The record gives the reactivity of an RNA of 207 nucleotides to 2A3. The data come from the RNA Mapping Database (RMDB), library ARCHII. The reactions ran in a buffer of 150 mM KOAc, 10 mM MgCl2 and 150 mM bicine (pH 8.5), at 24 C.
RNA sequence: GGGAACGACUCGAGUAGAGUCGAAAAACUGCCAAUAACAAGCAGUCGUCCUUUGUUCUCGCUGCCUAAGCGAGCGCACUAACAGGACCGUCGACCCGGUGAUGCUCUCUAUCCGGUAAGUCGGCGUCAGAAAAGGGAGCUCGCUGCGCGGUCGUGCCAGUGCUUCGUAGUUCGCUACGAAGCACUGAAAAGAAACAACAACAACAAC
Reactivity to 2A3 in 0.01 (KOAc 150mM, MgCl2 10mM, bicine 150mM(pH8.5), 24C), signal-to-noise 1, nucleotides 027 to 156: a020c020u020g040c040c020a080a170u210a170a090c100a120a000g000c020a030g020u030c010g020u030c020c000u030u040u050g000u000u000c020u000c010g010c010u040g060c030c110u100a040a030g000c000g000a000g000c000g010c050a080c000u100a270a020c050a060g010g050a010c020c020g070u050c000g010a050c000c000c000g050g000u020g020a040u210g010c010u000c010u000c000u040a040u000c010c010g100g000u100a130a070g130u110c010g000g050c000g040u040c040a010g100a020a090a030a030g020g000g020a030g000c010u000c000g000c020u040g000c030g110c060g010g000u030c050g030u060g060c040